[RMDB]
RNA sequence: GGGAACGACUCGAGUAGAGUCGAAAAGAUAUGGAAAUGUUUCUGCAAGCACUAUUCGGAAACGAACGAAUGCUUGAACUACAGACACAUUUCCUAAGUCAAAUCACGUUCCUUCGGGAACGUGAAACGUGUAUAAGUGGUUCGCCACUUAUACACGAAAAGAAACAACAACAACAAC
Reactivity to 2A3 in 0.01 (KOAc 150mM, MgCl2 10mM, bicine 150mM(pH8.5), 24C), signal-to-noise 5, nucleotides 027 to 126: g010a000u060a030u110g000g000a000a000a010u000g010u000u020u000c010u030g060c020a010a010g000c010a010c080u110a090u050u020c010g030g010a090a090a070c050g000a040a020c050g100a300a180u030g010c000u020u010g000a070a040c110u180a040c110a010g000a000c010a010c000a020u010u010u000c000c000u000a110a000g020u010c030a030a020a160u050c010a000c000g000u000u000c020c000u000u040c240g070g000g000a000a000c000g000u000g000a020a010a000
Reactivity to DMS in 0.01 (KOAc 150mM, MgCl2 10mM, bicine 150mM(pH8.5), 24C), signal-to-noise 6, nucleotides 027 to 126: g010a030u010a300u010g000g000a000a010a000u000g010u000u000u000c000u000g000c010a010a010g010c010a010c060u000a300u000u000c010g010g000a090a080a180c030g010a020a030c120g000a050a050u000g010c000u000u010g000a050a030c110u020a300c010a000g000a020c060a010c000a000u000u000u000c000c000u010a030a070g000u000c030a100a120a170u000c000a000c000g000u000u000c000c000u000u010c230g030g000g000a000a000c000g010u000g000a000a030a050
About this RNA:
Chemical mapping of a 177-nucleotide RNA with 2A3 and DMS. The reactions ran in a buffer of 150 mM KOAc, 10 mM MgCl2 and 150 mM bicine (pH 8.5), at 24 C. For DMS, 8,817 sequencing reads were counted. DMS adducts were read by reverse transcription with MarathonRT. For 2A3, 20,474 sequencing reads were counted.